[RMDB]
RNA sequence: GGGAACGACUCGAGUAGAGUCGAAAAAACCGAUGAUGUGCGAGCAGCCUUUUCUGUUGUGGCUGUAGCGCUGCCUGUAGCGAUCGCUUAUGCGCAAUUAACCGGCGUGCCUGCUAUUGUCGGACUACCUAAUUACGCUGUUCGCAGCGUAAUUAGGAAAAGAAACAACAACAACAAC
Reactivity to 2A3 in 0.01 (KOAc 150mM, MgCl2 10mM, bicine 150mM(pH8.5), 24C), signal-to-noise 4, nucleotides 027 to 126: a000a000c000c000g000a010u000g000a000u010g070u060g120c000g020a030g000c000a010g010c010c010u070u130u100u090c120u110g170u120u050g030u070g160g020c000u010g030u030a010g000c010g010c040u060g030c010c040u290g170u300a030g040c050g080a070u120c030g010c040u080u110a050u170g010c010g000c010a020a040u080u040a080a040c040c020g020g020c080g060u050g000c000c010u000g000c010u020a010u000u020g010u020c010g030g010a040c010u060a070
Reactivity to DMS in 0.01 (KOAc 150mM, MgCl2 10mM, bicine 150mM(pH8.5), 24C), signal-to-noise 4, nucleotides 027 to 126: a050a050c000c000g000a000u000g010a030u000g020u010g020c020g020a110g020c020a160g000c010c000u010u010u010u010c220u020g000u000u000g020u000g020g000c000u000g000u000a030g030c030g040c240u010g020c030c070u010g020u000a110g010c060g000a080u000c050g030c020u000u000a100u010g020c020g000c060a030a050u000u000a070a080c190c130g000g000c010g020u020g010c020c050u000g000c020u000a040u000u010g010u000c000g010g030a300c050u000a120

Structure probing data (2A3 and DMS) for a 177-nucleotide construct. For 2A3, 4,661 sequencing reads were counted. The RNA was probed in 150 mM KOAc, 10 mM MgCl2 and 150 mM bicine (pH 8.5) at 24 C. DMS adducts were read by reverse transcription with MarathonRT. 2A3 adducts were read by reverse transcription with SuperScript II with manganese. The DMS profile rests on 5,330 reads. It was measured as part of the RMDB library OK2TST.